[RMDB]
An RNA of 177 nucleotides, treated with DMS and 2A3 and read out base by base. Values are in units of 0.01, from 0 to 300, in steps of 10. Reactivities are given for positions 27 through 126. The RNA was probed in 150 mM KOAc, 10 mM MgCl2 and 150 mM bicine (pH 8.5) at 24 C. The DMS profile rests on 9,135 reads. The data come from the RNA Mapping Database (RMDB), library OK2TRN.

RNA sequence: GGGAACGACUCGAGUAGAGUCGAAAAGUAUGCUAUGCGCUGCCCAUCACCGAGGAUGCCAUGCGCUGUAAGAGGGCUGCCACCGCGGCAGGCUGACCAUGGCAGGGUCGGAACAGCAACCUGAGAGGAGUCACUAGUAAUUCGUUACUAGUGACUCAAAAGAAACAACAACAACAAC
Reactivity to DMS in 0.01 (KOAc 150mM, MgCl2 10mM, bicine 150mM(pH8.5), 24C), signal-to-noise 7, nucleotides 027 to 126: g020u000a060u010g020c040u000a070u010g020c130g010c040u000g000c030c040c020a100u010c100a140c040c040g010a070g000g010a180u000g000c030c030a030u000g000c170g020c060u000g000u010a080a110g010a140g010g010g020c010u000g000c010c060a120c260c230g000c140g010g030c010a020g000g000c020u000g010a080c070c010a030u000g000g010c030a060g010g010g000u000c020g000g010a090a110c060a050g010c050a040a130c040c030u000g010a140g010a170g010
Reactivity to 2A3 in 0.01 (KOAc 150mM, MgCl2 10mM, bicine 150mM(pH8.5), 24C), signal-to-noise 3, nucleotides 027 to 126: g050u050a050u220g040c050u040a060u250g060c080g010c040u040g010c010c010c020a050u110c030a020c030c020g030a040g180g030a050u040g010c010c010a010u040g040c090g020c140u050g070u070a090a060g090a130g100g030g050c010u010g020c010c010a110c080c240g090c070g050g000c000a010g020g050c010u030g020a030c010c000a020u020g010g000c010a000g050g000g040u010c020g000g010a070a030c010a010g040c000a030a050c010c040u140g020a090g030a060g200